Chemical mapping of a 177-nucleotide RNA with DMS and 2A3.
It was measured as part of the RMDB library TTRDES.
In probing experiments dimethyl sulfate is read out at A N1 and C N3, which are open when not base-paired.
DMS adducts were read by reverse transcription with MarathonRT.
RNA sequence: GGGAACGACUCGAGUAGAGUCGAAAAGAUAUGGAUACCAGAGCAACAGCGAUAGGUCGGAAACGACCUGAUCGACAUGCUCAUGGUAUCCUAAGUCAAAGAACGUUUAUGUUCGCAUAAACGUUCAGACAGUAUAGGCCUUCGGGCCUAUACUGUCAAAAGAAACAACAACAACAAC
Reactivity to DMS in 0.01 (KOAc 150mM, MgCl2 10mM, bicine 150mM(pH8.5), 24C), signal-to-noise 1, nucleotides 027 to 126: g020a010u000a050u010g000g000a020u000a040c000c000a030g000a010g010c030a170a190c300a170g030c000g000a010u000a020g000g000u010c030g000g000a070a040a040c000g000a000c000c000u000g000a020u000c010g030a090c170a090u000g020c000u000c000a040u000g000g000u000a000u000c000c000u000a000a080g000u000c000a070a230a160g000a000a020c010g000u000u030u000a000u010g000u000u030c250g030c000a040u000a000a020a000c000g000u000u000c000a000
Reactivity to 2A3 in 0.01 (KOAc 150mM, MgCl2 10mM, bicine 150mM(pH8.5), 24C), signal-to-noise 1, nucleotides 027 to 126: g000a010u030a020u070g000g000a010u000a020c000c000a000g020a000g010c070a060a280c150a300g040c030g020a010u010a010g020g000u000c020g010g020a000a000a000c010g000a010c000c000u020g020a060u000c020g060a050c050a200u200g000c000u020c020a160u010g000g000u000a000u000c000c000u010a000a000g000u000c010a150a000a190g010a010a000c010g010u020u000u000a020u020g030u070u090c200g040c040a010u010a000a000a000c000g000u000u020c010a000